RNA sequence: GGGAACGACUCGAGUAGAGUCGAAAAUGCAGUGGUGGCCCGGCAGUACCUGACAGACAACGCCACAUUCCAACGGACUGCUCGCAUGUGGACAGAGAACUUUGCGCACAGGUCACAGGCGGCGACAUACUGUAGGGGAUUUCGAUCCCCUACAGUAAAAAGAAACAACAACAACAAC
Reactivity to 2A3 in 0.01 (KOAc 150mM, MgCl2 10mM, bicine 150mM(pH8.5), 24C), signal-to-noise 1, nucleotides 027 to 126: u170g000c030a000g090u060g120g060u050g020g040c000c020c000g010g010c000a000g000u070a170c000c000u090g030a040c000a040g120a020c020a040a010c060g000c000c010a070c010a030u100u000c000c020a080a040c020g000g020a030c030u060g030c050u030c040g000c030a020u020g030u050g130g050a080c070a090g150a000g040a160a090c060u180u140u110g040c070g000c010a050c020a060g020g020u010c020a020c010a010g040g000c070g000g010c000g020a030c000a060
Reactivity to DMS in 0.01 (KOAc 150mM, MgCl2 10mM, bicine 150mM(pH8.5), 24C), signal-to-noise 3, nucleotides 027 to 126: u000g010c040a090g010u000g020g030u000g000g000c030c040c020g020g000c040a040g020u000a100c040c010u000g010a140c250a070g000a070c160a060a090c090g000c000c040a080c070a110u010u000c020c030a050a150c110g010g000a090c080u000g010c040u010c050g010c060a040u000g030u000g020g030a080c090a080g010a150g010a040a050c090u000u000u000g020c080g010c070a080c090a090g010g000u000c030a040c070a060g010g020c040g010g000c070g000a050c090a120
The record gives the reactivity of an RNA of 177 nucleotides to 2A3 and DMS. The RNA was probed in 150 mM KOAc, 10 mM MgCl2 and 150 mM bicine (pH 8.5) at 24 C. Values are in units of 0.01, from 0 to 300, in steps of 10. The data come from the RNA Mapping Database (RMDB), library OK2TRN. For DMS the reverse transcriptase was MarathonRT. For DMS, 2,451 sequencing reads were counted.